RNA sequence: GGGAACGACUCGAGUAGAGUCGAAAAUCGCGCAGGUUUGCGGUAUCUGCGGGAACCGGCAAAUCGUCGAAGGCAGGGAUAUUGCGCGCGGCGGUCGCCUUGGCCCGCUCGACGGCAGCGGCGACCGGAGUCGAUUCCAUUUCGAUGGAAUCGACUCAAAAGAAACAACAACAACAAC
Reactivity to 2A3 in 0.01 (KOAc 150mM, MgCl2 10mM, bicine 150mM(pH8.5), 24C), signal-to-noise 2, nucleotides 027 to 126: u090c010g000c010g000c040a030g000g060u050u070u070g010c000g010g010u070a240u030c030u060g150c080g080g110g040a020a010c000c010g090g050c010a020a040a040u100c070g080u060c070g090a100a030g090g000c060a040g210g000g000a040u140a070u210u130g020c030g010c000g000c000g120g000c020g000g010u010c000g000c000c000u020u090g060g040c000c010c000g000c010u010c070g280a220c000g010g000c020a030g080c040g020g010c010g000a010c030c030g030
Reactivity to DMS in 0.01 (KOAc 150mM, MgCl2 10mM, bicine 150mM(pH8.5), 24C), signal-to-noise 2, nucleotides 027 to 126: u020c020g020c000g030c010a080g000g010u010u000u010g030c010g010g020u000a020u000c020u010g010c110g010g000g020a140a070c020c000g030g060c020a000a050a020u000c070g030u000c050g030a090a090g010g010c030a070g010g000g000a070u020a080u000u000g010c060g010c010g020c140g020g000c030g010g020u000c010g030c010c010u000u010g020g000c060c010c010g010c080u010c120g010a120c120g020g000c020a100g030c300g010g010c020g010a020c000c000g000